Source: RMDB library OK3TST, as collected in RNAgym. The record gives the reactivity of an RNA of 207 nucleotides to 2A3. The 2A3 profile rests on 455 reads.
[RMDB]
RNA sequence: GGGAACGACUCGAGUAGAGUCGAAAAGUCAUCUUGACACUUCAGUCUUUCCAUUUUGAGAUCGGAAGCUUUAAGGACCAUUAAAUCGCUGCCGCUGCCACACCAGGCCCGACGGAGCAGAAAGGCUGCGCUCACCUGCGGAAGCGACCGGGUGCACAACUAGACAGAACUUCGGUUCUGUCUAGUUAAAAGAAACAACAACAACAAC
Reactivity to 2A3 in 0.01 (KOAc 150mM, MgCl2 10mM, bicine 150mM(pH8.5), 24C), signal-to-noise 1, nucleotides 027 to 156: g040u010c000a170u100c050u140u120g010a020c020a020c020u040u070c000a080g050u000c000u020u070u000c030c020a060u140u050u070u300g170a110g000a060u020c070g000g020a020a020g000c000u000u070u110a050a040g030g000a030c020c000a040u090u170a120a120a040u130c080g010c040u070g030c000c030g020c030u020g010c000c000a100c020a020c080c000a060g090g060c020c000c020g030a050c070g030g040a000g000c040a000g040a080a080a000g020g020c020u020g050c030g000c000u030c000a200c000c050u090g020c020g020g000a050a000g030c010g030a000c020c080g050g030g000u080g040c080a040c000
Reactivities are rounded to 0.1 and cut off at 0 and 3.